[RMDB]
RNA sequence: GGGAACGACUCGAGUAGAGUCGAAAAAUACACCAGCAGUAGGACUCAGCGACCGUAACAACAAGGUUGUGCUGGUAUCCGACGGUCGUAUAGCCCUGUCUUGCAGGUUGCCUUGCACUGACGUGCCACACCAUUUACAGAUUCGUCUGUAAAUGAAGAGUAAUGAGUGCUUCGGCACUCAUUACUCAAAAGAAACAACAACAACAAC
Reactivity to 2A3 in 0.01 (KOAc 150mM, MgCl2 10mM, bicine 150mM(pH8.5), 24C), signal-to-noise 2, nucleotides 027 to 156: a010u180a020c100a040c010c000a000g010c000a040g000u130a030g010g020a020c000u020c200a050g010c000g000a000c000c000g030u100a070a050c140a100a010c080a090a160g060g000u040u020g000u040g090c080u110g050g070u040a080u040c010c040g000a000c030g000g000u000c000g000u050a040u000a120g020c000c000c000u060g050u040c030u020u140g010c010a020g040g000u080u100g050c030c030u040u100g030c000a000c050u130g070a030c150g010u020g030c040c010a130c020a040c070c010a030u010u000u020a010c010a000g000a000u000u100c090g090u020c080u010g000u000a000a000a000u000g000a010a020